An RNA of 177 nucleotides, treated with DMS and 2A3 and read out base by base. DMS adducts were read by reverse transcription with MarathonRT. The RNA was probed in 150 mM KOAc, 10 mM MgCl2 and 150 mM bicine (pH 8.5) at 24 C. 2A3 adducts were read by reverse transcription with SuperScript II with manganese. DMS (dimethyl sulfate) methylates the pairing face of unpaired adenines and cytosines.
RNA sequence: GGGAACGACUCGAGUAGAGUCGAAAAUCAAUGGACUUCGGUCCAUUGAAAAAGACAAUAAAGCUAGUGCUGAGCUGAAUGACAACAGCACAAAGAAAAGAAAAAUCGUGCACUUCGGUGCACGAAACGUAUUAUAUCUGUUCGCAGAUAUAAUACGAAAAGAAACAACAACAACAAC
Reactivity to DMS in 0.01 (KOAc 150mM, MgCl2 10mM, bicine 150mM(pH8.5), 24C), signal-to-noise 8, nucleotides 027 to 126: u000c010a000a000u000g000g010a020c010u000u020c200g060g010u000c000c000a000u000u010g000a010a050a080a080a090g010a110c130a060a080u000a090a130a040g010c010u000a110g030u000g000c000u000g000a050g020c000u000g010a110a090u010g010a090c200a050a120c010a000g000c010a010c000a120a100a120g000a050a060a060a100g010a040a050a050a090a080u000c010g010u000g010c000a000c000u000u010c180g030g010u000g010c010a010c000g000a000a030a060
Reactivity to 2A3 in 0.01 (KOAc 150mM, MgCl2 10mM, bicine 150mM(pH8.5), 24C), signal-to-noise 9, nucleotides 027 to 126: u020c000a000a000u000g000g000a000c010u030u040c240g090g010u000c000c000a000u000u000g000a000a000a000a000a000g080a040c070a050a070u150a230a200a010g000c000u050a030g000u010g000c000u010g010a010g010c020u070g100a150a140u220g050a090c050a080a010c000a090g020c010a000c010a010a040a000g010a010a040a000a020g130a020a100a010a000a030u030c000g000u000g000c000a000c010u040u080c230g060g000u000g000c000a000c000g000a000a000a000